[RMDB]
RNA sequence: GGGAACGACUCGAGUAGAGUCGAAAAUCUAGCGAGGCUGAAUUCCUUUCUGAGGCUGGUAUCCUGUAGGGUCUGCCUUAAGUAAGUGGUGUUGACGUCCGGGUCCUGCGCAAUGGGAAUCCAUGAACCAUGUCAGGUCCGGAAGGAAGCAGCAUUAGAGUAAACUAUAGUUCGCUAUAGUUUACUCAAAAGAAACAACAACAACAAC
Reactivity to DMS in 0.01 (KOAc 150mM, MgCl2 10mM, bicine 150mM(pH8.5), 24C), signal-to-noise 2, nucleotides 027 to 156: u020c020u000a030g020c000g010a050g010g060c030u010g010a120a100u020u000c020c030u000u000u000c080u000g010a040g010g020c000u020g040g030u010a060u010c020c010u020g040u010a110g030g020g000u000c010u000g000c020c000u000u010a040a130g010u020a090a100g030u010g010g000u000g010u010u010g010a300c030g000u000c010c010g050g000g020u000c000c010u000g010c120g000c050a120a040u000g000g020g000a150a070u000c130c160a150u000g000a140a300c000c010a030u000g020u000c050a030g010g020u000c040c000g000g020a000a000g000g020a230a090g050c020a040g010c020a070u000u000a140
Reactivity to 2A3 in 0.01 (KOAc 150mM, MgCl2 10mM, bicine 150mM(pH8.5), 24C), signal-to-noise 3, nucleotides 027 to 156: u040c030u070a020g090c010g090a040g090g000c030u050g030a070a080u120u080c010c000u020u100u010c030u060g030a030g010g000c030u050g050g040u110a120u110c010c040u150g180u200a220g010g000g030u000c020u020g020c010c000u050u030a150a030g040u040a060a030g010u030g120g060u050g030u120u030g090a040c040g030u000c000c000g000g000g030u150c020c000u030g000c110g020c100a140a180u010g000g000g060a040a070u100c080c050a070u120g040a030a060c000c000a000u000g020u030c010a000g010g010u000c010c000g000g000a000a000g000g000a010a030g000c010a000g020c010a030u050u170a030